[RMDB]
RNA sequence: GGGAACGACUCGAGUAGAGUCGAAAAGGAUGUGCAGGGACAGAGGGAGUUGCAACAAGGCCACUAAACUGCUCAGAGCUGCUCAGGUUCUACUUUGCUGCAGCCCCAUCACCCCACCAUAAAGUCCCUCAUUAGGUGGAUUCGUCCACCUAAUGAGAAAAGAAACAACAACAACAAC
Reactivity to DMS in 0.01 (KOAc 150mM, MgCl2 10mM, bicine 150mM(pH8.5), 24C), signal-to-noise 6, nucleotides 027 to 126: g000g010a040u010g010u010g030c100a110g010g010g010a100c110a120g000a160g000g010g000a060g020u000u000g010c020a020a030c040a040a040g000g010c160c280a110c080u000a040a090a100c060u000g000c050u000c160a080g010a140g000c050u000g000c080u010c160a110g000g010u000u000c090u010a100c020u000u000u000g010c030u010g010c010a020g010c010c000c000c020a080u020c040a180c050c010c000c020a070c070c060a040u010a040a080a130g000u000c010c020
Reactivity to 2A3 in 0.01 (KOAc 150mM, MgCl2 10mM, bicine 150mM(pH8.5), 24C), signal-to-noise 4, nucleotides 027 to 126: g090g010a060u070g010u080g060c130a070g030g030g070a070c070a130g020a090g030g010g000a210g030u030u030g000c010a030a010c000a010a040g040g010c020c030a060c050u090a080a130a090c050u090g010c030u020c090a040g020a020g060c040u070g020c050u060c150a040g010g000u080u000c020u060a090c000u050u050u030g010c010u000g000c000a020g000c000c000c000c000a040u040c010a070c000c010c000c000a020c020c010a050u130a070a140a010g080u050c020c010